[RMDB]
RNA sequence: GGGAACGACUCGAGUAGAGUCGAAAAAGAGCCGGAUACGUCCGGCUCAACGGGGGAUACGUGUGGUGCCGUCCGCUCCCCCUAUGGCAUAACAAAUGCACCACACACUAGUCUACGGCCUAGUGAAAAAAUCCCUACAUGUUCGCAUGUAGGGAAACUAACUUCAUUGCUUCGGCAAUGAAGUUAGAAAAGAAACAACAACAACAAC
Reactivity to 2A3 in 0.01 (KOAc 150mM, MgCl2 10mM, bicine 150mM(pH8.5), 24C), signal-to-noise 1, nucleotides 027 to 156: a000g000a000g000c040c000g000g020a030u040a040c100g070u000c000c000g000g000c000u000c000a000a000c010g000g000g000g000g000a030u040a090c000g020u000g000u000g020g000u010g000c000c010g020u030c000c030g110c050u070c000c000c000c000c020u000a180u200g120g010c110a090u050a140a000c030a050a020a030u040g000c010a000c010c000a000c000a000c000a000c000u010a000g020u000c010u030a040c190g130g000c010c000u000a000g030u060g080a040a000a000a000a000a100u050c000c000c000u000a000c000a000u000g000u040u060c090g000c090a000u000g020u000a000g010g000g000a000a000a000
Source information
An RNA of 207 nucleotides, treated with 2A3 and read out base by base. Reactivities are rounded to 0.1 and cut off at 0 and 3.